[RMDB]
This 177-nucleotide RNA was probed chemically with 2A3 and DMS.
Reactivities are given for positions 27 through 126.
Conditions: 150 mM KOAc, 10 mM MgCl2 and 150 mM bicine (pH 8.5), 24 C.
Source: RMDB library OK1LIB, as collected in RNAgym.

RNA sequence: GGGAACGACUCGAGUAGAGUCGAAAAUUGAUCAAUCUCCUCCCUUGUGGAACGAAACGAGCGCGGAUAAAAGAAUGAUUGGUACGGAUAGUACGAUGUCUUUUUUCUCGAGAAUGGCAAGGCCAGCUACCGUACGCUGAUUCGUCAGCGUACGGUAAAAAGAAACAACAACAACAAC
Reactivity to 2A3 in 0.01 (KOAc 150mM, MgCl2 10mM, bicine 150mM(pH8.5), 24C), signal-to-noise 3, nucleotides 027 to 126: u100u180g040a050u060c020a090a000u020c050u050c050c020u070c020c040c130u020u040g020u180g030g010a170a050c020g010a020a030a070c140g000a080g160c060g000c030g030g000a000u020a120a050a000a010g010a000a030u100g110a110u200u030g230g030u000a000c000g030g200a220u130a160g010u000a010c050g020a010u060g010u000c000u020u060u050u000u070u000c080u070c020g020a030g070a090a110u000g030g000c030a010a010g070g080c000c030a010g000c010
Reactivity to DMS in 0.01 (KOAc 150mM, MgCl2 10mM, bicine 150mM(pH8.5), 24C), signal-to-noise 1, nucleotides 027 to 126: u030u040g000a070u010c060a090a070u020c040u000c040c080u020c000c010c020u000u000g000u030g000g000a100a020c100g020a050a080a090c140g020a130g000c070g050c130g000g020a020u020a000a050a000a010g020a040a050u040g000a060u000u000g010g070u000a010c000g000g000a100u030a000g000u000a040c040g020a050u020g000u000c000u000u020u000u010u000u000c030u000c000g000a080g000a020a040u030g000g050c050a090a140g030g020c090c040a120g020c090